[RMDB]
RNA sequence: GGGAACGACUCGAGUAGAGUCGAAAAGAUAUGGAAAGUCUACCCACCUCUGGCUCCAAGAACUACAAGGAGAAGUAUCGGAAACGAUACGUAACUUGCUUGGAGCCAGAGAGGACUUUCCUAAGUCCUAUUUGAAUGAGUUCGCUCAUUCAAAUAGAAAAGAAACAACAACAACAAC
Reactivity to 2A3 in 0.01 (KOAc 150mM, MgCl2 10mM, bicine 150mM(pH8.5), 24C), signal-to-noise 2, nucleotides 027 to 126: g050a090u270a160u300g000g000a000a000a030g020u000c010u050a300c030c030c000a050c040c000u000c010u000g000g000c010u000c000c000a000a000g000a100a090c270u300a090c300a020a010g080g000a010g030a020a010g030u000a000u020c000g030g000a180a070a040c010g000a040u020a000c010g010u020a050a030c000u010u020g010c000u000u000g010g000a010g080c020c000a000g010a000g000a010g010g000a010c010u010u000u000c010c000u010a000a010g070u120c000
Reactivity to DMS in 0.01 (KOAc 150mM, MgCl2 10mM, bicine 150mM(pH8.5), 24C), signal-to-noise 4, nucleotides 027 to 126: g020a210u000a110u010g010g000a020a020a010g000u000c010u000a200c040c030c040a300c140c000u010c010u000g000g000c010u000c000c000a020a010g010a090a050c090u010a300c010a020a010g010g040a090g000a140a210g000u000a000u000c010g000g000a130a110a300c000g010a000u000a000c000g000u000a090a300c010u000u000g000c010u000u010g000g000a010g010c000c000a000g010a000g000a040g030g000a000c000u010u000u000c010c000u000a030a090g000u020c100

The record gives the reactivity of an RNA of 177 nucleotides to 2A3 and DMS. Values cover nucleotides 27 to 126. Source: RMDB library TTRINS, as collected in RNAgym. For DMS the reverse transcriptase was MarathonRT. For DMS, 3,554 sequencing reads were counted. Conditions: 150 mM KOAc, 10 mM MgCl2 and 150 mM bicine (pH 8.5), 24 C.